[RMDB]
Conditions: 150 mM KOAc, 10 mM MgCl2 and 150 mM bicine (pH 8.5), 24 C. Structure probing data (DMS and 2A3) for a 177-nucleotide construct. DMS adducts were read by reverse transcription with MarathonRT. It was measured as part of the RMDB library OK2TRN. In probing experiments dimethyl sulfate is read out at A N1 and C N3, which are open when not base-paired. The DMS profile rests on 1,355 reads.

RNA sequence: GGGAACGACUCGAGUAGAGUCGAAAACAUGGUAAGGUGGGCCAGGGCAUUUCGGCCUGGAGCAAGACCUUUUGCGCCCUCUUUGGCCCUUGGUUCCGUGCUAUUGAGAAGGCUAUUCUGGCCCUGCAGUAGCCUAACGGUUCGCCGUUAGGCUACUAAAAGAAACAACAACAACAAC
Reactivity to DMS in 0.01 (KOAc 150mM, MgCl2 10mM, bicine 150mM(pH8.5), 24C), signal-to-noise 1, nucleotides 027 to 126: c070a060u010g030g030u010a000a050g000g010u000g030g030g030c000c010a040g010g000g040c080a160u000u000u010c080g000g000c010c020u000g000g010a100g010c100a130a040g000a060c070c010u030u000u000u010g020c110g040c020c010c110u010c080u000u000u000g000g010c020c040c060u000u000g010g000u010u000c010c020g040u000g000c040u010a100u020u000g010a110g000a090a100g010g010c020u000a150u000u000c080u000g000g010c000c000c020u020g020c070
Reactivity to 2A3 in 0.01 (KOAc 150mM, MgCl2 10mM, bicine 150mM(pH8.5), 24C), signal-to-noise 1, nucleotides 027 to 126: c030a000u130g060g140u300a040a040g130g080u100g000g070g050c030c000a000g000g020g000c050a070u100u100u160c040g010g000c000c010u010g000g020a030g000c040a030a010g040a070c010c020u050u080u030u060g070c030g050c000c000c030u010c080u080u130u080g000g000c010c080c000u040u050g000g020u120u000c040c030g000u080g000c000u030a110u170u110g050a140g030a120a060g030g000c020u050a080u140u080c010u020g020g000c000c040c030u030g050c050